RNA sequence: GGGAACGACUCGAGUAGAGUCGAAAAGAAAGGCAGCCAGUGCAGCCCACGGAGCCAGUCGAAGCAUGCUUUUGCAUGCCGCCCACGACUGAGGGCAGCUGCGGCACUGAGGGCAGCUGCCGAAAGAGAUAGCCCUAAUAUUCGUAUUAGGGCUAUCAAAAGAAACAACAACAACAAC
Reactivity to DMS in 0.01 (KOAc 150mM, MgCl2 10mM, bicine 150mM(pH8.5), 24C), signal-to-noise 7, nucleotides 027 to 126: g010a090a130a140g000g020c020a030g020c010c050a100g010u010g010c110a130g010c060c040c030a100c090g010g010a110g010c070c010a030g000u000c030g000a260a150g000c010a000u000g000c000u000u010u010u000g020c000a010u000g000c010c080g020c030c020c060a300c060g000a070c080u010g000a110g010g000g010c010a090g000c050u010g010c060g000g000c030a040c040u000g000a050g010g000g020c080a080g010c010u000g000c000c000g000a010a070a080g000a160
Reactivity to 2A3 in 0.01 (KOAc 150mM, MgCl2 10mM, bicine 150mM(pH8.5), 24C), signal-to-noise 6, nucleotides 027 to 126: g080a020a090a010g010g010c000a000g000c010c030a050g050u080g110c030a030g040c020c010c010a030c060g060g020a030g060c020c000a010g030u040c020g060a070a000g000c000a000u010g000c000u150u220u260u300g000c020a000u010g000c030c030g040c010c020c010a080c020g120a040c060u090g040a140g030g050g000c000a010g010c040u080g020c030g040g000c030a010c040u040g020a120g030g050g010c020a010g000c000u000g000c000c000g010a020a020a000g080a000
This 177-nucleotide RNA was probed chemically with DMS and 2A3.
DMS adducts were read by reverse transcription with MarathonRT.
The 2A3 profile rests on 11,833 reads.
For DMS, 9,967 sequencing reads were counted.
Source: RMDB library OK2TRN, as collected in RNAgym.